[RMDB]
Conditions: 150 mM KOAc, 10 mM MgCl2 and 150 mM bicine (pH 8.5), 24 C. Structure probing data (2A3 and DMS) for a 177-nucleotide construct. The DMS profile rests on 5,130 reads. Reactivities are given for positions 27 through 126.
RNA sequence: GGGAACGACUCGAGUAGAGUCGAAAAGUGAUGACGAUAGUAAGUCAGCAGGUGGAAGCACUUGUACGGUGGUUACUGCAGCCUCAUAUACAUGAAUGACUGAUGUAGAGUUCGGUUGGAGCGACAAUCCAAUUAGACAGUUCGCUGUCUAAUUGGAAAAAGAAACAACAACAACAAC
Reactivity to 2A3 in 0.01 (KOAc 150mM, MgCl2 10mM, bicine 150mM(pH8.5), 24C), signal-to-noise 2, nucleotides 027 to 126: g080u050g020a080u070g010a030c010g010a000u050a080g100u040a140a000g010u030c000a000g020c030a000g020g060u040g040g030a080a060g010c020a010c050u020u060g020u100a030c040g000g050u020g060g000u060u040a040c000u030g040c020a010g050c030c000u050c020a030u080a010u010a080c070a040u070g100a140a040u140g030a070c040u060g040a040u030g050u060a030g000a030g080u050u050c050g000g050u060u070g050g010a020g060c020g030a020c010a010a080
Reactivity to DMS in 0.01 (KOAc 150mM, MgCl2 10mM, bicine 150mM(pH8.5), 24C), signal-to-noise 5, nucleotides 027 to 126: g010u010g010a080u000g000a040c030g000a140u000a100g020u010a070a130g000u000c030a080g010c030a060g000g030u000g000g000a140a100g010c030a030c030u010u000g000u000a100c140g000g020u010g000g010u000u000a040c060u000g000c070a060g010c020c030u000c030a040u000a120u000a080c080a030u010g000a090a100u000g000a070c070u000g010a050u000g000u000a060g000a130g000u010u000c110g000g020u000u000g010g010a090g010c060g010a080c160a060a140